The record gives the reactivity of an RNA of 177 nucleotides to DMS and 2A3. For DMS the reverse transcriptase was MarathonRT. The 2A3 profile rests on 7,742 reads. The reactions ran in a buffer of 150 mM KOAc, 10 mM MgCl2 and 150 mM bicine (pH 8.5), at 24 C.
RNA sequence: GGGAACGACUCGAGUAGAGUCGAAAAGAUAUGGACUCGGUUGGGAGUCUGUACUCGGAAACGAGUACCAGACGAAGAACAACCCGAGUCCUAAGUCAAAUCGUAGGCACCUUCGGGUGCCUACGAACCAUCACUAGGAGUUCGCUCCUAGUGAUGGAAAAGAAACAACAACAACAAC
Reactivity to DMS in 0.01 (KOAc 150mM, MgCl2 10mM, bicine 150mM(pH8.5), 24C), signal-to-noise 3, nucleotides 027 to 126: g010a010u000a040u010g000g000a030c010u000c000g000g010u000u000g000g030g000a070g020u010c010u000g010u000a000c000u010c000g000g000a000a010a030c000g010a030g000u010a000c300c230a010g020a000c000g050a130a160g000a160a300c010a020a010c080c030c110g000a010g000u000c000c000u000a000a010g000u010c010a100a120a140u000c010g020u000a020g000g000c010a010c000c000u000u030c220g020g010g020u000g000c000c010u000a000c000g000a060a080
Reactivity to 2A3 in 0.01 (KOAc 150mM, MgCl2 10mM, bicine 150mM(pH8.5), 24C), signal-to-noise 3, nucleotides 027 to 126: g000a010u010a010u040g000g000a000c000u000c010g000g000u000u000g050g030g020a240g030u000c010u000g000u000a000c000u000c000g010g030a010a000a000c000g000a010g000u010a010c010c030a000g020a010c030g200a300a270g060a120a020c000a000a010c030c080c020g010a000g000u020c000c000u000a010a000g010u010c010a030a010a260u060c010g010u010a000g010g000c010a010c020c000u060u120c300g150g010g000u010g010c010c010u000a000c000g010a000a000